[RMDB]
RNA sequence: GGGAACGACUCGAGUAGAGUCGAAAAUGAACUACUUUUUGAUUGCGUUGAUCUUUCAGUAGCUUCUACCUAUUUUUUAGUCCGCAUCUUGCAAGAUAAGACUGGCGACUUUAUGUCUACAAUUAUUUAAGUAGGUUCUUCGGAACCUACAAAAGAAACAACAACAACAAC
Reactivity to 2A3 in 0.01 (KOAc 150mM, MgCl2 10mM, bicine 150mM(pH8.5), 24C), signal-to-noise 8, nucleotides 027 to 129: u130g000a010a000c000u020a000c000u020u040u000u020u050g020a020u000u100g100c160g150u100u300g030a020u030c000u000u020u020c020a000g000u000a010g020c140u030u000c030u000a080c000c000u040a180u060u160u010u010u010u050a030g010u060c070c030g010c010a030u030c010u010u090g020c080a110a080g060a220u110a060a020g020a050c030u060g070g030c010g010a020c000u050u070u100a160u210g100u000c060u040a050c080a110a070u130u100a120u050u250u070a120a000
Reactivity to DMS in 0.01 (KOAc 150mM, MgCl2 10mM, bicine 150mM(pH8.5), 24C), signal-to-noise 4, nucleotides 027 to 129: u040g020a050a040c010u010a050c020u000u000u000u000u000g060a040u000u000g050c170g030u030u060g040a110u000c010u000u000u000c020a020g030u000a000g000c070u000u020c040u010a000c010c040u080a050u030u000u040u100u050u060a090g000u030c040c080g020c080a050u010c040u050u060g040c140a130a090g000a000u000a000a010g010a070c100u030g040g040c000g010a040c060u000u000u000a060u050g030u020c000u050a080c090a080a120u050u060a120u000u020u010a050a170
Chemical mapping of a 170-nucleotide RNA with 2A3 and DMS. DMS adducts were read by reverse transcription with MarathonRT. The RNA was probed in 150 mM KOAc, 10 mM MgCl2 and 150 mM bicine (pH 8.5) at 24 C. For 2A3, 12,882 sequencing reads were counted.